[RMDB]
RNA sequence: GGGAACGACUCGAGUAGAGUCGAAAAACAGGAACGGAAUGUGCGAGCGGAUCGAGUGGCAAUCGUAGAGAAUGGCGACGCCGUGGAUUGCCUUCACGCGCUCGAUUUCGGCGGCAAGCGCAUCGUAUAGUCCGUAAAAUUUCGAUUUUACGGACUAAAAAGAAACAACAACAACAAC
Reactivity to 2A3 in 0.01 (KOAc 150mM, MgCl2 10mM, bicine 150mM(pH8.5), 24C), signal-to-noise 4, nucleotides 027 to 126: a000c040a030g110g060a050a030c040g030g080a190a060u030g010u050g050c020g020a040g030c010g000g010a030u040c020g010a020g030u040g050g000c010a020a030u030c030g030u100a040g030a010g050a300a130u100g020g020c070g070a110c190g050c030c010g000u030g000g050a060u030u020g000c000c000u050u050c070a060c040g080c020g010c000u000c000g000a000u020u040u100c050g140g000c000g050g020c060a080a050g010c000g000c020a010u020c000g010u050a060
Reactivity to DMS in 0.01 (KOAc 150mM, MgCl2 10mM, bicine 150mM(pH8.5), 24C), signal-to-noise 7, nucleotides 027 to 126: a100c090a120g010g000a110a070c050g010g010a090a020u000g010u010g020c020g010a140g020c010g010g000a060u000c040g000a030g020u010g010g010c020a030a020u000c020g020u010a130g010a150g000a110a050u000g000g000c000g020a120c190g020c020c030g010u000g010g000a030u000u000g000c020c030u010u000c090a060c180g020c130g010c000u000c010g000a030u000u000u010c030g020g020c030g000g010c100a090a170g010c040g000c030a020u000c050g010u000a160